[RMDB]
The record gives the reactivity of an RNA of 177 nucleotides to DMS and 2A3. For DMS, 1,721 sequencing reads were counted. The 2A3 profile rests on 1,273 reads. The RNA was probed in 150 mM KOAc, 10 mM MgCl2 and 150 mM bicine (pH 8.5) at 24 C.
RNA sequence: GGGAACGACUCGAGUAGAGUCGAAAAUUGAGUACUCACCAGUCACAGAAAAGCAUCUUACGGAUGGCAUGACAGUAAGAGAAUUAUGCAGUGCUGCCAUAACCAUGAGUGAUAACACUGCGGCCAAUGAAAUAGUUCGGUUCGCCGAACUAUUUCAAAAAGAAACAACAACAACAAC
Reactivity to DMS in 0.01 (KOAc 150mM, MgCl2 10mM, bicine 150mM(pH8.5), 24C), signal-to-noise 2, nucleotides 027 to 126: u010u010g010a120g030u000a030c090u010c020a110c050c060a120g000u000c030a030c050a100g020a070a100a100a100g050c040a070u010c020u000u000a060c120g000g020a090u000g030g010c040a070u000g010a050c040a060g000u000a020a040g030a100g010a110a080u000u010a040u010g030c030a060g000u000g020c040u000g020c030c010a010u010a090a100c070c050a040u010g000a070g020u010g000a050u000a020a060c080a050c010u000g010c030g010g000c050c090a050a110
Reactivity to 2A3 in 0.01 (KOAc 150mM, MgCl2 10mM, bicine 150mM(pH8.5), 24C), signal-to-noise 1, nucleotides 027 to 126: u040u020g030a010g030u040a030c000u010c010a070c010c000a010g050u010c020a030c000a070g120a060a100a030a020g000c010a050u070c010u030u070a020c060g060g010a020u030g000g020c020a010u080g030a070c060a000g030u060a060a000g030a020g060a180a070u240u070a110u180g000c010a010g020u000g080c030u030g000c030c000a050u040a060a060c040c000a020u060g060a050g070u000g030a040u030a090a000c030a000c000u000g030c040g030g020c010c010a010a070